[RMDB]
RNA sequence: GGGAACGACUCGAGUAGAGUCGAAAAGUUCCUUUCUGUGUGGUUCUUGUGGUAGUGUUGGUUACACCAAGGAGGGUAGUGUGAUCAAUUUCUGUUACAUGCAUCAAAUGGAACUUGCUAAUGGUACAGGGUUGGGCGUUCGCGCCCAACAAAAGAAACAACAACAACAAC
Reactivity to DMS in 0.01 (KOAc 150mM, MgCl2 10mM, bicine 150mM(pH8.5), 24C), signal-to-noise 2, nucleotides 027 to 129: g040u120u000c050c010u000u000u060c100u010g010u020g080u070g020g030u020u000c010u030u010g030u000g010g040u020a030g010u000g000u050u000g000g030u010u040a040c020a040c050c100a170a170g040g000a100g020g070g070u060a040g060u010g030u030g000a070u000c070a020a000u060u070u020c010u030g000u060u000a000c040a040u030g020c030a060u020c010a000a000a000u060g010g010a060a020c070u010u080g020c020u070a050a070u010g000g040u030a070c110a130g040g070
Reactivity to 2A3 in 0.01 (KOAc 150mM, MgCl2 10mM, bicine 150mM(pH8.5), 24C), signal-to-noise 3, nucleotides 027 to 129: g000u010u010c000c000u010u040u000c040u010g080u000g020u010g020g050u040u040c030u020u010g010u000g000g000u010a020g000u000g000u020u020g000g000u030u000a010c020a000c000c010a150a030g160g020a080g040g130g000u120a050g000u010g000u000g000a000u010c000a000a020u110u240u030c000u000g010u000u030a000c010a000u020g020c000a010u000c000a030a060a040u040g000g000a020a000c020u020u070g020c020u050a100a060u220g080g050u120a050c070a020g090g000